[RMDB]
RNA sequence: GGGAACGACUCGAGUAGAGUCGAAAAUUGUCAUAGAGUGCUGACAGUGUUCUGUGUCUUUCAGUGACACACGAGUUCAGAUGCAUUGAGCUGUGCGUUUAAGAUGAGUGGACAUUACUGUAUUUAAGUCAGUACUGAAUUUCGAUUCAGUACUGACAAAAGAAACAACAACAACAAC
Reactivity to 2A3 in 0.01 (KOAc 150mM, MgCl2 10mM, bicine 150mM(pH8.5), 24C), signal-to-noise 5, nucleotides 027 to 126: u040u050g020u030c010a010u050a090g090a020g100u110g030c030u030g050a030c030a030g020u010g030u080u000c040u030g030u010g040u020c000u020u180u060c090a100g050u020g080a000c000a000c000a010c090g060a020g030u020u040c020a000g010a110u070g080c040a050u040u090g030a040g050c070u040g000u030g010c030g020u030u050u050a090a060g040a090u070g010a020g040u060g030g030a010c000a060u050u120a080c060u050g050u160a140u070u140u020a070a020
Reactivity to DMS in 0.01 (KOAc 150mM, MgCl2 10mM, bicine 150mM(pH8.5), 24C), signal-to-noise 6, nucleotides 027 to 126: u000u000g010u000c020a060u000a100g010a110g020u010g010c080u010g010a080c110a070g010u000g010u010u000c050u000g020u000g010u000c010u010u000u000c180a090g030u000g020a040c060a030c010a040c110g010a090g010u000u000c020a050g000a130u000g010c070a070u000u010g010a080g020c030u010g000u000g010c030g010u000u000u010a070a090g010a080u000g000a080g040u000g010g000a060c060a050u000u010a070c080u010g000u010a100u000u010u010a070a210
The data come from the RNA Mapping Database (RMDB), library OK2TST. The record gives the reactivity of an RNA of 177 nucleotides to 2A3 and DMS. Reactivities are given for positions 27 through 126. For 2A3, 6,978 sequencing reads were counted.